[RMDB]
RNA sequence: GGGAACGACUCGAGUAGAGUCGAAAAGGUGCAGUGGUGAGCAAGAGGGACAGGCCAGAGUAAGAGGGACAGGCCAGAAUAUGUAUGGAAAGGUAAGGCACUGGCUUGAGGGCUGUCGCCGUGGUGUCUCCAUCCUGGAUUAAGCAUUUCCUCCUCCCACUUGAGAUCAGUUCGCUGAUCUCAAGUGAAAAGAAACAACAACAACAAC
Reactivity to 2A3 in 0.01 (KOAc 150mM, MgCl2 10mM, bicine 150mM(pH8.5), 24C), signal-to-noise 4, nucleotides 027 to 156: g000g010u080g010c020a040g030u040g060g030u040g020a040g030c050a070a060g050a070g050g010g000a010c050a030g060g010c010c020a030g010a010g110u110a120a020g030a060g050g010g010a020c020a020g030g010c020c010a020g030a060a080u200a040u110g100u060a050u120g040g080a090a060a020g050g020u080a040a080g040g000c030a000c070u040g020g030c000u020u060g050a120g000g020g020c030u050g030u070c060g020c100c020g020u050g070g000u060g040u020c010u030c030c000a050u050c000c040u030g000g010a030u050u000a050a010g000c030a050u010u050u070c000c010u020c020c010u010c000c010
Reactivity to DMS in 0.01 (KOAc 150mM, MgCl2 10mM, bicine 150mM(pH8.5), 24C), signal-to-noise 2, nucleotides 027 to 156: g020g030u000g020c000a130g070u020g000g030u000g000a090g010c050a090a130g020a120g020g010g030a050c040a110g020g020c020c020a130g010a140g000u000a050a110g010a150g020g020g000a090c050a100g020g030c030c010a070g030a080a090u010a070u000g030u010a120u010g020g030a050a060a070g040g000u010a040a090g010g030c050a090c050u000g000g000c030u030u020g000a150g000g010g030c020u010g020u010c090g010c030c000g050u010g000g010u000g010u000c010u000c020c020a070u000c010c000u010g000g010a150u000u000a060a070g020c090a190u010u000u000c000c020u000c010c010u000c010c020